Structure probing data (DMS and 2A3) for a 177-nucleotide construct. The 2A3 profile rests on 681 reads. The reactions ran in a buffer of 150 mM KOAc, 10 mM MgCl2 and 150 mM bicine (pH 8.5), at 24 C. It was measured as part of the RMDB library OK2TRN.
RNA sequence: GGGAACGACUCGAGUAGAGUCGAAAAGGGCACCGACAUUAUCCCCAUGAGGAUGCCGGCGGUGAGUAUCGACUGGCCGGUGGUCGGCUCGUAGGAGAAGAGCGGUAUGAAUCUGCAACACUCGUAGGUAAUCUACAGCCUUCGGGCUGUAGAUUACAAAAGAAACAACAACAACAAC
Reactivity to DMS in 0.01 (KOAc 150mM, MgCl2 10mM, bicine 150mM(pH8.5), 24C), signal-to-noise 1, nucleotides 027 to 126: g030g030g010c080a100c090c000g000a050c030a100u010u000a130u010c000c000c030c110a230u050g010a080g010g000a080u000g010c000c020g000g000c000g000g000u010g020a150g030u000a060u000c150g000a040c000u010g040g070c000c000g010g060u000g000g020u000c000g020g000c040u000c010g040u000a090g020g000a070g000a070a140g000a180g040c010g000g030u000a210u000g000a080a070u000c020u000g010c040a060a090c190a070c040u000c050g020u000a080g000
Reactivity to 2A3 in 0.01 (KOAc 150mM, MgCl2 10mM, bicine 150mM(pH8.5), 24C), signal-to-noise 1, nucleotides 027 to 126: g030g110g040c010a040c100c000g050a030c020a010u190u260a070u210c000c050c090c000a160u200g030a050g090g000a030u040g030c010c000g030g010c020g030g050u030g060a090g050u070a200u280c090g080a090c020u050g270g130c000c000g000g000u030g020g000u030c000g020g040c000u020c000g050u070a030g090g000a030g030a110a020g060a000g030c050g010g040u050a140u250g080a100a040u020c040u020g000c000a100a000c050a010c030u020c000g080u010a090g140